RNA sequence: GGGAACGACUCGAGUAGAGUCGAAAAUCUGUGUCUGUUACCAAGUCUGGCCAGGUCCAAGAAUAAUGACUUCUUCACUUCCAAAUCUUGUACAAGUUUCUCUUUUGGUUGACUCUACCUCAGAACCAUCCAGAGAAGGAGAUUUCUGUGAAAUACAUACCUAAUAGUAGUUCGCUACUAUUAGGUAAAAAGAAACAACAACAACAAC
Reactivity to 2A3 in 0.01 (KOAc 150mM, MgCl2 10mM, bicine 150mM(pH8.5), 24C), signal-to-noise 6, nucleotides 027 to 156: u050c020u020g050u030g020u040c030u050g070u070u050a090c040c040a060a060g050u000c030u040g020g010c010c020a050g020g010u040c040c010a080a040g080a040a040u230a080a080u120g060a070c020u060u010c000u070u030c060a040c050u090u020c050c000a060a090a180u060c050u090u090g040u120a060c040a120a160g050u030u090u000c040u020c000u030u070u050u050g020g000u020u060g060a070c010u020c020u080a080c010c030u050c020a020g020a060a020c010c000a020u050c030c020a020g020a010g010a140a050g090g010a050g010a020u030u090u040c040u060g070u030g080a020a030a110u260a030c140a030
Reactivity to DMS in 0.01 (KOAc 150mM, MgCl2 10mM, bicine 150mM(pH8.5), 24C), signal-to-noise 4, nucleotides 027 to 156: u000c030u000g020u000g020u010c020u010g030u010u010a130c060c030a090a100g030u000c040u010g020g000c010c040a070g010g030u000c050c030a080a140g010a130a140u000a080a100u010g000a070c050u000u000c030u000u010c030a110c030u000u010c040c030a060a080a080u000c020u010u010g020u010a130c060a090a150g010u000u000u000c020u000c030u000u000u010u010g010g030u010u000g030a060c020u000c020u000a070c050c070u000c070a120g020a060a080c020c000a090u000c020c030a100g020a100g010a080a080g000g000a080g010a100u000u000u000c030u000g010u000g010a060a070a110u000a060c040a220